[RMDB]
RNA sequence: GGGAACGACUCGAGUAGAGUCGAAAAACAUCGAACCGAACAGCGGCUUUCGGAAAGCGAAGCCUUGCAGCGAUCGCUCAUAGCGGGUGUUCCGCAAUUGGUCUGGCGGGCGCGAUCCGCUGGCCUUCGCAUCUGGUCAAGCCCGCAGUGGGAACGGCUUCCUCAUGCAUUUCGAUGCAUGAGGAAGAAAAGAAACAACAACAACAAC
Reactivity to 2A3 in 0.01 (KOAc 150mM, MgCl2 10mM, bicine 150mM(pH8.5), 24C), signal-to-noise 2, nucleotides 027 to 156: a000c000a060u150c050g010a040a060c030c010g050a070a020c020a050g010c000g000g010c000u000u030u010c000g020g000a080a080a040g000c010g010a000a010g080c010c030u090u140g050c000a030g070c000g030a010u030c040g000c000u030c080a050u160a040g070c090g000g080g010u120g120u150u180c020c000g040c010a070a240u190u170g070g050u110c080u110g080g010c010g040g090g000c080g000c030g040a050u040c090c000g010c010u000g010g030c010c000u000u000c020g000c020a010u000c020u010g020g000u140c020a050a000g020c000c060c020g000c020a030g030u120g010g000g040a020a050c030g000g000